[RMDB]
RNA sequence: GGGAACGACUCGAGUAGAGUCGAAAAGGGGUCAUGCGAUGAGCGUGUAGAGGGCGAGGAUCUAUACUGAAGCCUCCACGGUAUAGGGAGCCUGGACACGCGAGCAUGACGGAGGCACCCAAACCCUUAUCUUCCACUUCGGUGGAAGAUAAGGGAAGCCACUUAUUGUCUUCGGACAAUAAGUGGCAAAAGAAACAACAACAACAAC
Reactivity to 2A3 in 0.01 (KOAc 150mM, MgCl2 10mM, bicine 150mM(pH8.5), 24C), signal-to-noise 2, nucleotides 027 to 156: g040g010g030g060u010c010a000u010g020c000g220a270u190g030a140g020c100g010u050g040u070a120g120a300g050g020g020c040g040a300g000g010a010u000c000u000a000u010a000c000u010g010a180a020g010c020c020u020c000c000a010c000g010g020u000a000u000a000g030g000g000a010g000c000c020u000g040g060a000c010a000c030g010c000g000a000g000c010a000u000g000a000c000g000g000a000g000g000c020a030c000c000c000a010a110a210c010c000c020u000u020a000u000c000u000u010c010c020a050c020u050u130c300g100g000u000g000g000a000a000g000a000u000a010a000g000g000g000a000a010